Source: RMDB library OK3TST, as collected in RNAgym.
The record gives the reactivity of an RNA of 207 nucleotides to 2A3 and DMS.
For 2A3 the reverse transcriptase was SuperScript II with manganese.
DMS adducts were read by reverse transcription with MarathonRT.
RNA sequence: GGGAACGACUCGAGUAGAGUCGAAAAGGUACGGCCGCAACUGCGUAACGUGCCCGGUGUCACCGAGAUCAAUACUAUCGGUGGUUUCAACAAGCAGUACCUGGUCGCGCCGAGUCUUGAACGGCUAGCGUCGUACGGGCUGACGCUGACCGACGUCGAAUGUUUGUGUUUUCGAACACAAACAUUCAAAAGAAACAACAACAACAAC
Reactivity to 2A3 in 0.01 (KOAc 150mM, MgCl2 10mM, bicine 150mM(pH8.5), 24C), signal-to-noise 7, nucleotides 027 to 156: g030g010u030a010c010g010g000c000c020g030c070a070a040c020u040g010c020g100u170a110a070c070g040u060g000c000c010c010g010g010u050g020u020c000a000c000c010g010a010g020a050u270c180a220a130u160a300c120u180a070u070c000g010g000u020g000g040u050u130u160c110a110a070c050a080a040g000c010a010g000u060a070c010c080u120g010g000u010c010g010c010g000c030c010g020a060g040u020c050u080u180g090a160a030c010g000g020c020u030a000g000c000g000u000c000g010u030a040c000g000g000g000c020u010g010a010c020g000c000u010g010a050c000c000g010a060c040g060u130c070
Reactivity to DMS in 0.01 (KOAc 150mM, MgCl2 10mM, bicine 150mM(pH8.5), 24C), signal-to-noise 2, nucleotides 027 to 156: g030g060u000a040c010g000g010c030c020g000c030a120a070c020u000g020c030g010u020a080a120c180g020u000g000c000c000c000g020g030u000g000u010c010a020c010c010g020a040g000a130u010c100a200a170u000a190c300u000a110u000c010g030g020u000g010g010u000u000u020c060a100a140c080a090a170g020c010a030g000u010a100c080c080u000g030g030u000c020g020c000g000c000c020g010a160g010u000c020u000u020g040a080a130c040g000g000c000u010a050g010c010g000u000c010g020u000a140c030g020g010g040c010u000g010a000c000g020c020u000g020a050c010c010g030a120c110g000u000c070